[RMDB]
RNA sequence: GGGAACGACUCGAGUAGAGUCGAAAAAGCGCGGCUUGAACGAGACCUCUCGUAAGACUAUGACUGACUUCUUACGAGAGUCUUUCAAGCCGAACUGAGUGUAAGAGGUAAGAAGUCAGUCAUAGUCUUACCUCUGGUCUCACUCAGUUCGAACGCAAUAAUAAUUAGUGUUCGCACUAAUUAUUAUAAAAGAAACAACAACAACAAC
Reactivity to 2A3 in 0.01 (KOAc 150mM, MgCl2 10mM, bicine 150mM(pH8.5), 24C), signal-to-noise 3, nucleotides 027 to 156: a000g040c020g000c010g010g030c020u130u180g000a030a020c030g000a000g000a010c000c010u040c030u040c030g000u000a000a000g000a000c000u000a000u000g000a010c000u020g000a000c010u010u000c010u030u000a010c050g070a070g060a010g240u000c010u000u060u030c020a030a000g020c020c010g000a000a010c030u040g040a030g070u110g010u120a040a020g020a030g100g010u000a010a000g000a000a000g010u000c000a010g010u010c000a000u000a000g000u000c000u000u000a000c000c000u000c050u040g000g010u000c000u000c000a000c000u030c000a010g030u110u150c020g000a050a010c010g000c070a010
Reactivity to DMS in 0.01 (KOAc 150mM, MgCl2 10mM, bicine 150mM(pH8.5), 24C), signal-to-noise 2, nucleotides 027 to 156: a060g020c050g040c040g020g010c030u000u010g000a020a060c040g000a010g000a010c050c010u000c020u000c020g000u000a000a020g010a050c070u000a040u000g010a070c020u000g000a050c020u000u000c010u000u010a030c010g020a130g010a130g020u010c010u000u000u010c040a070a080g000c010c070g000a010a150c040u010g010a100g020u000g010u000a100a060g010a070g030g030u010a010a010g000a040a050g010u000c030a020g010u010c010a060u000a050g000u000c010u000u010a010c000c010u010c010u000g010g020u000c090u000c010a010c020u000c020a040g000u000u010c050g030a100a070c020g020c010a200